The record gives the reactivity of an RNA of 207 nucleotides to 2A3. The reactions ran in a buffer of 150 mM KOAc, 10 mM MgCl2 and 150 mM bicine (pH 8.5), at 24 C. 2A3 adducts were read by reverse transcription with SuperScript II with manganese. The 2A3 profile rests on 1,416 reads.
RNA sequence: GGGAACGACUCGAGUAGAGUCGAAAAACACCAUAGUUCGCUAUGGUGUAAAAAAACCUUUGUGAUCUACAAGCGACGAUCAUGUCCGACCCAUUGGGUCGAGCAUGGGAGCUUGGGAUCACUCUGGUAAAAAUAGGGCACGUUCGCGUGCCCUAAAGUUUUACUUCUAGUUCGCUAGAAGUAAAACAAAAGAAACAACAACAACAAC
Reactivity to 2A3 in 0.01 (KOAc 150mM, MgCl2 10mM, bicine 150mM(pH8.5), 24C), signal-to-noise 2, nucleotides 027 to 156: a000c000a000c010c000a010u010a000g040u080u100c170g020c140u010a010u010g010g000u000g000u000a000a000a000a010a000a000a020c000c000u030u020u010g010u000g000a000u030c010u120a300c150a000a000g010c030g300a300c010g010a070u000c000a000u000g040u020c030c000g000a010c010c020c070a270u190u300g040g000g010u020c010g000a030g000c000a000u000g020g000g000a010g010c000u000u000g000g010g000a000u000c000a000c000u000c010u010g000g010u060a110a090a040a000a010u110a050g000g000g030c000a020c000g010u020u060c260g010c030g100u030g000c000c010c010u000a000a010a000